RNA sequence: GGGAACGACUCGAGUAGAGUCGAAAAUGCUCCAACCGUGAGGCCUCUUUAGUACGGGCGGCGACAGAUUUGCUUCAUGGAUUUUAUAGGUCCGCUCUACUGAGUGCGCUGCACCGCCGUCACGCACAUCGAUAAAUGCGUUCGCGCAUUUAUCGAUAAAAGAAACAACAACAACAAC
Reactivity to DMS in 0.01 (KOAc 150mM, MgCl2 10mM, bicine 150mM(pH8.5), 24C), signal-to-noise 2, nucleotides 027 to 126: u010g020c050u030c010c060a170a190c090c060g030u000g000a110g020g020c070c140u020c060u030u010u010a170g000u000a030c110g000g010g020c020g000g010c020g000a060c180a050g000a210u010u010u000g000c000u010u000c070a070u010g000g010a050u010u000u010u040a130u000a120g020g020u010c020c010g000c040u000c040u000a070c120u000g000a050g010u000g010c070g020c070u000g010c050a070c080c030g010c020c020g000u000c030a030c010g020c100a060c070
Reactivity to 2A3 in 0.01 (KOAc 150mM, MgCl2 10mM, bicine 150mM(pH8.5), 24C), signal-to-noise 2, nucleotides 027 to 126: u110g040c010u040c050c030a090a060c000c030g020u060g050a070g030g000c020c030u080c080u090u120u120a050g030u030a010c040g000g020g000c010g000g020c020g000a020c010a070g070a040u120u140u190g020c000u050u120c060a090u120g040g000a060u100u050u050u130a170u110a140g080g030u000c030c020g000c000u020c020u060a050c030u050g020a040g050u030g030c130g020c070u030g000c030a030c060c020g000c050c000g070u080c020a000c090g000c020a020c020